[RMDB]
RNA sequence: GGGAACGACUCGAGUAGAGUCGAAAAGAUAUGGACUACCCACCAAUAGAACUACGUCUAAGUAUCGGAAACGAUACGAAGACGCUAUUGAGGUCCUAAGUCAAAGGCUCACGUUCGCGUGAGCCAAUCUUAUCUAGCACUUCGGUGCUAGAUAAGAAAAAGAAACAACAACAACAAC
Reactivity to DMS in 0.01 (KOAc 150mM, MgCl2 10mM, bicine 150mM(pH8.5), 24C), signal-to-noise 3, nucleotides 027 to 126: g010a060u000a200u010g010g000a030c000u010a110c000c020c010a300c130c020a000a010u000a000g010a090a080c170u020a300c020g000u000c000u010a020a300g000u010a010u000c010g000g000a100a090a160c000g020a000u000a000c000g000a090a050g010a030c000g000c000u000a000u000u000g000a070g000g000u000c020c000u010a090a120g010u000c130a070a170a080g010g000c000u000c000a010c000g010u000u000c200g020c010g020u000g010a010g000c000c000a010a000
Reactivity to 2A3 in 0.01 (KOAc 150mM, MgCl2 10mM, bicine 150mM(pH8.5), 24C), signal-to-noise 2, nucleotides 027 to 126: g000a020u150a070u160g000g010a020c030u090a110c050c010c010a010c030c000a000a000u020a010g030a090a080c140u180a050c300g000u030c000u030a060a030g000u020a000u000c010g050g050a030a030a040c030g000a010u000a020c000g020a020a010g000a000c020g000c010u000a010u010u010g000a030g010g000u020c000c020u040a190a010g100u120c160a030a080a100g000g000c000u020c000a010c030g000u110u150c270g030c040g180u000g000a000g000c010c000a010a010
Structure probing data (DMS and 2A3) for a 177-nucleotide construct. For DMS, 2,297 sequencing reads were counted. The RNA was probed in 150 mM KOAc, 10 mM MgCl2 and 150 mM bicine (pH 8.5) at 24 C. It was measured as part of the RMDB library TTRDEL.